[RMDB]
Source: RMDB library OK2TRN, as collected in RNAgym. This 177-nucleotide RNA was probed chemically with 2A3 and DMS. High 2A3 reactivity points to a flexible backbone, as in loops and unpaired stretches.
RNA sequence: GGGAACGACUCGAGUAGAGUCGAAAAGCUUGUUAUCAUCAACAAUGGGUACAGUUGUUCAGUGAGCUAGGUGCUGAUUUGCCAACCAACGAUAAUUUGUUUGGCGAACAUUGGCCUGCCCAUGUUCCGGUUCAACGUUUUUCGAAACGUUGAACCGAAAAGAAACAACAACAACAAC
Reactivity to 2A3 in 0.01 (KOAc 150mM, MgCl2 10mM, bicine 150mM(pH8.5), 24C), signal-to-noise 1, nucleotides 027 to 126: g000c010u110u130g040u000u120a150u110c070a000u040c020a000a080c020a060a270u140g030g090g040u070a160c050a070g030u110u040g010u110u110c080a110g010u010g040a000g000c010u150a030g020g030u130g170c000u020g080a300u020u010u080g010c000c000a000a020c000c000a070a010c040g070a070u070a300a100u090u000u090g000u010u000u010g010g010c050g070a060a000c010a010u060u150g040g000c000c020u020g000c000c000c000a000u080g020u050u010c000
Reactivity to DMS in 0.01 (KOAc 150mM, MgCl2 10mM, bicine 150mM(pH8.5), 24C), signal-to-noise 1, nucleotides 027 to 126: g000c030u010u000g030u000u020a040u000c110a060u020c040a070a090c200a110a040u000g010g000g000u000a050c130a080g000u000u010g000u000u000c100a160g040u010g010a050g010c000u000a020g010g020u000g000c070u000g020a080u000u000u010g020c010c020a010a000c030c000a000a020c240g000a150u000a050a180u010u000u010g010u000u010u000g000g020c020g000a000a010c040a030u000u020g010g010c010c010u000g000c020c020c000a040u000g020u000u000c090